Chemical mapping of a 177-nucleotide RNA with 2A3 and DMS. The reactions ran in a buffer of 150 mM KOAc, 10 mM MgCl2 and 150 mM bicine (pH 8.5), at 24 C. 2A3 adducts were read by reverse transcription with SuperScript II with manganese.
RNA sequence: GGGAACGACUCGAGUAGAGUCGAAAAUCUGUUUACAAGUUAUGGUUAAGUCCAUGUCUGACUACCAUUCCGUAAACAGAAGCCAGUUUGCGUCAAGUCCGACAUGGACUCUUGGCAGAACUGAUCACUCAGUGAGCGUAUUCGUACGCUCACUGAGAAAAGAAACAACAACAACAAC
Reactivity to 2A3 in 0.01 (KOAc 150mM, MgCl2 10mM, bicine 150mM(pH8.5), 24C), signal-to-noise 2, nucleotides 027 to 126: u000c000u030g040u040u050u060a040c030a050a230g030u090u060a050u090g100g010u060u160a080a020g000u000c010c060a040u050g090u010c190u120g020a000c000u030a090c000c000a010u100u010c040c020g000u000a010a000a010c000a010g050a000a000g110c060c010a000g010u020u030u000g030c050g000u010c050a050a040g010u000c030c010g110a280c280a220u120g000g000a010c030u000c040u020u040g020g000c020a000g000a020a000c010u030g050a050u090c030a020
Reactivity to DMS in 0.01 (KOAc 150mM, MgCl2 10mM, bicine 150mM(pH8.5), 24C), signal-to-noise 2, nucleotides 027 to 126: u010c000u010g010u000u000u010a070c070a110a050g000u000u030a060u000g010g000u010u000a060a030g010u000c010c110a070u000g010u000c170u020g000a020c020u000a120c050c060a100u000u000c110c040g000u010a000a010a010c010a030g000a060a090g010c230c060a110g010u000u000u000g010c090g000u000c110a040a030g000u010c010c060g020a060c220a050u010g030g030a040c020u000c030u000u000g000g010c010a240g000a010a040c020u010g000a090u010c140a190